An RNA of 177 nucleotides, treated with DMS and 2A3 and read out base by base. Source: RMDB library OK2TRN, as collected in RNAgym. DMS adducts were read by reverse transcription with MarathonRT. For 2A3, 1,862 sequencing reads were counted. The RNA was probed in 150 mM KOAc, 10 mM MgCl2 and 150 mM bicine (pH 8.5) at 24 C. The DMS profile rests on 2,758 reads.
RNA sequence: GGGAACGACUCGAGUAGAGUCGAAAAAUGGCUCUGUACACCAGAGACCAGCUCACGGGCGUGGGUGUGCCUAUUGAGCAGGCCACUGUUCAUGCUGACGGUCUUGUUGCUGCGAUGGACAACGUGACAUAGACCCGUUGUUCGCAACGGGUCUAUGAAAAGAAACAACAACAACAAC
Reactivity to DMS in 0.01 (KOAc 150mM, MgCl2 10mM, bicine 150mM(pH8.5), 24C), signal-to-noise 3, nucleotides 027 to 126: a090u000g030g010c010u000c000u010g020u020a130c260a130c300c010a020g000a030g000a110c000c010a070g010c040u010c020a050c150g010g000g010c070g000u000g010g000g000u000g000u000g000c010c020u000a190u000u000g000a060g030c050a070g000g020c020c020a030c030u000g000u000u000c040a050u000g010c030u000g000a110c070g000g010u000c070u000u000g000u010u000g020c010u000g020c060g020a060u010g000g000a050c030a060a080c050g020u000g010a230
Reactivity to 2A3 in 0.01 (KOAc 150mM, MgCl2 10mM, bicine 150mM(pH8.5), 24C), signal-to-noise 2, nucleotides 027 to 126: a010u050g000g010c000u000c000u000g070u090a050c100a120c090c000a000g010a000g070a140c010c000a000g010c030u040c020a050c050g070g050g010c050g020u080g060g010g020u110g070u070g020c000c010u060a170u060u150g120a060g000c020a000g020g010c020c000a080c070u020g020u180u100c010a010u020g100c020u110g060a070c040g070g000u030c050u090u160g140u120u100g040c020u040g040c070g100a070u040g000g040a010c000a090a020c070g060u050g030a010